RNA sequence: GGGAACGACUCGAGUAGAGUCGAAAAAUCUUUAAGCAGAUGGCAGGUUCACCCCGUACGGUGCGGAAGUUCGCGCUUCCGUGAAACGCGAAAAUCGGACGGUGGCUGCAAGUCGCAUCGUAAAACCUAUAGCUUGUUAGGUUCGCCUAACAAGCAACGAGAUAGCAUACUUCGGUAUGCUAUCUCGAAAAGAAACAACAACAACAAC
Reactivity to 2A3 in 0.01 (KOAc 150mM, MgCl2 10mM, bicine 150mM(pH8.5), 24C), signal-to-noise 2, nucleotides 027 to 156: a000u080c060u040u080u070a040a070g060c030a100g040a150u090g080g030c060a020g060g020u130u150c020a080c000c000c000c020g000u010a010c000g000g030u010g010c000g020g010a030a060g030u140u170c060g000c050g010c060u030u020c000c000g020u050g010a100a120a000c090g050c020g110a080a010a010a090u150c030g010g010a020c030g040g020u030g020g020c040u060g010c090a020a020g040u050c010g000c030a000u000c010g070u090a040a010a040a050c060c050u150a090u070a100g000c000u000u000g010u020u000a000g000g020u010u010c250g000c040c000u000a000a000c000a000a000g000c000a000a000

Structure probing data (2A3) for a 207-nucleotide construct. The reactions ran in a buffer of 150 mM KOAc, 10 mM MgCl2 and 150 mM bicine (pH 8.5), at 24 C. 2A3 adducts were read by reverse transcription with SuperScript II with manganese.